Source information: Structure probing data (DMS and 2A3) for a 177-nucleotide construct.

[RMDB]
RNA sequence: GGGAACGACUCGAGUAGAGUCGAAAAUCGUGGACCUAAAAGAGCUUAGUGCCGGUGUACUUAAAGCUUUUGAGGUCAAAACUUCUGACGUUGGUCAAGCAGUCAUGACGACAACUACCGAUAAUGCCAAAAACAUCUCUUUCGAGAGAUGUUUUUGAAAAGAAACAACAACAACAAC
Reactivity to DMS in 0.01 (KOAc 150mM, MgCl2 10mM, bicine 150mM(pH8.5), 24C), signal-to-noise 7, nucleotides 027 to 126: u000c050g010u020g010g000a020c000c000u010a050a040a010a020g000a010g000c000u010u000a050g000u010g000c000c270g020g030u040g020u000a010c010u000u010a070a010a030g030c000u000u000u000u000g010a110g000g000u010c020a060a060a110a070c090u000u000c040u000g000a050c060g030u020u030g020g020u010c050a070a070g010c090a040g010u000c040a090u000g020a070c020g000a050c110a090a080c090u020a070c030c030g010a050u040a120a090u020g010c160
Reactivity to 2A3 in 0.01 (KOAc 150mM, MgCl2 10mM, bicine 150mM(pH8.5), 24C), signal-to-noise 9, nucleotides 027 to 126: u090c050g030u080g090g010a010c010c000u050a180a150a000a010g040a010g000c020u040u060a010g000u020g040c080c100g270g060u300g010u090a010c010u040u150a140a030a010g010c000u030u010u030u040g060a010g000g000u000c000a000a000a000a010c020u060u040c020u040g030a040c040g120u150u110g090g010u090c040a070a040g010c020a020g050u050c010a040u120g050a030c030g020a010c010a140a050c100u070a050c020c020g030a040u090a160a080u240g090c030
The DMS profile rests on 21,207 reads. The data come from the RNA Mapping Database (RMDB), library OK1LIB.